[RMDB]
RNA sequence: GGGAACGACUCGAGUAGAGUCGAAAAUUGGGAUUCGUCCCAAGUUGUCCGUAGGUUGCGAAGUUUCGAAGAACAUGGGUCGCUCAUAUUCGAAAGAGUAUGAAAAGUCCCAUGGGAGAAACCGCAACCUAAACGGCUGGAGGUUAUUCGUAACCAAGAUUAGUUUAUAUUUCGAUAUAAACUAAUCAAAAGAAACAACAACAACAAC
Reactivity to 2A3 in 0.01 (KOAc 150mM, MgCl2 10mM, bicine 150mM(pH8.5), 24C), signal-to-noise 3, nucleotides 027 to 156: u040u010g010g000g010a020u070u050c160g070u030c070c000c000a000a040g030u050u040g050u060c000c000g000u010a000g000g000u000u010g030c020g070a300a140g030u010u020u010c110g070a220a020g030a040a000c000a000u010g030g000g000u020c020g030c020u020c010a000u000a000u010u010c010g020a070a080a130g000a020g000u000a000u000g020a010a070a070a180g010u010c000c000c000a000u000g000g000g020a050g000a010a000a000c010c000g010c000a000a000c000c000u000a000a010a000c000g020g010c060u200g130g070a090g080g030u040u040a030u130u170c170g050u080a040a010c040c020a060a030
Reactivity to DMS in 0.01 (KOAc 150mM, MgCl2 10mM, bicine 150mM(pH8.5), 24C), signal-to-noise 2, nucleotides 027 to 156: u010u010g010g000g010a080u000u000c210g030u020c000c000c010a030a300g000u010u000g010u010c000c030g010u010a080g030g010u000u000g030c010g000a130a180g000u000u010u010c010g010a140a240g030a120a120c000a000u000g040g040g030u000c040g000c300u000c010a010u000a010u000u000c000g010a140a150a290g000a060g030u000a010u000g000a010a100a120a140g000u000c010c000c010a010u010g000g020g000a220g000a040a020a010c010c000g000c010a040a000c000c000u000a010a020a040c040g000g020c070u000g010g030a130g000g020u000u000a100u000u010c120g020u000a020a100c000c020a030a300